[RMDB]
This 177-nucleotide RNA was probed chemically with 2A3 and DMS. The reactions ran in a buffer of 150 mM KOAc, 10 mM MgCl2 and 150 mM bicine (pH 8.5), at 24 C. The 2A3 profile rests on 1,981 reads. The DMS profile rests on 1,181 reads.
RNA sequence: GGGAACGACUCGAGUAGAGUCGAAAAGAAAAGAGCGUAAUCGCGUCUUGACGUGAGUGAGCCUAGACUGUAGGCUAUCCCAAGUGGGAUAGAAUAACUCACAAUACGCUGAUCUACAGUCAAAAGACCUCAGGCAUUACUUCGGUAAUGCCUGAGGAAAAGAAACAACAACAACAAC
Reactivity to 2A3 in 0.01 (KOAc 150mM, MgCl2 10mM, bicine 150mM(pH8.5), 24C), signal-to-noise 2, nucleotides 027 to 126: g190a000a100a010a000g060a000g000c000g000u020a000a060u110c000g000c000g000u030c090u080u300g150a040c000g010u020g000a010g000u000g010a010g000c000c010u060a050g020a020c000u000g000u000a000g010g000c000u000a000u000c030c010c010a110a110g250u300g040g000g000a010u010a000g010a050a080u070a030a020c000u000c000a000c000a000a010u010a030c000g000c000u010g000a020u000c000u000a000c000a000g010u000c020a000a040a040a020g070a060
Reactivity to DMS in 0.01 (KOAc 150mM, MgCl2 10mM, bicine 150mM(pH8.5), 24C), signal-to-noise 1, nucleotides 027 to 126: g000a050a100a000a240g050a080g080c090g030u000a060a300u050c000g000c000g000u000c000u020u010g040a050c080g010u000g000a040g000u000g000a000g080c300c200u050a040g010a000c000u000g000u010a000g000g020c000u000a010u000c000c090c000a220a220g080u000g000g000g000a000u000a000g000a100a020u000a000a210c000u000c000a000c050a080a170u000a000c040g000c020u000g000a160u000c000u000a000c010a000g030u000c000a020a090a190a150g000a070